RNA sequence: GGGAACGACUCGAGUAGAGUCGAAAACUCCAUCCUUGGCUUUGGAAGUGAUUUGAAAGGCCAGCUUGUUCAACCCGUAACACCAGCUCUACGCACUCGCUUUGAAGCCCUGUUCGGUGGUGGAAGCGCCACGGGCUUAGUUCGCUAAGCCCGUGGCAAAAGAAACAACAACAACAAC
Reactivity to 2A3 in 0.01 (KOAc 150mM, MgCl2 10mM, bicine 150mM(pH8.5), 24C), signal-to-noise 2, nucleotides 027 to 126: c000u000c000c000a050u050c000c010u040u030g030g000c000u110u000u030g010g050a040a090g030u170g190a090u190u040u300g110a080a010a030g000g020c000c000a000g000c030u100u210g150u110u000c070a020a020c030c050c000g080u070a030a030c090a090c130c090a080g000c000u040c000u070a030c050g030c020a000c000u010c000g040c010u070u000u130g130a160a000g010c000c000c000u010g030u180u150c060g060g020u130g000g010u000g030g060a240a000g040c150
The record gives the reactivity of an RNA of 177 nucleotides to 2A3. Values are in units of 0.01, from 0 to 300, in steps of 10. Source: RMDB library OK1LIB, as collected in RNAgym. Values cover nucleotides 27 to 126. For 2A3, 491 sequencing reads were counted.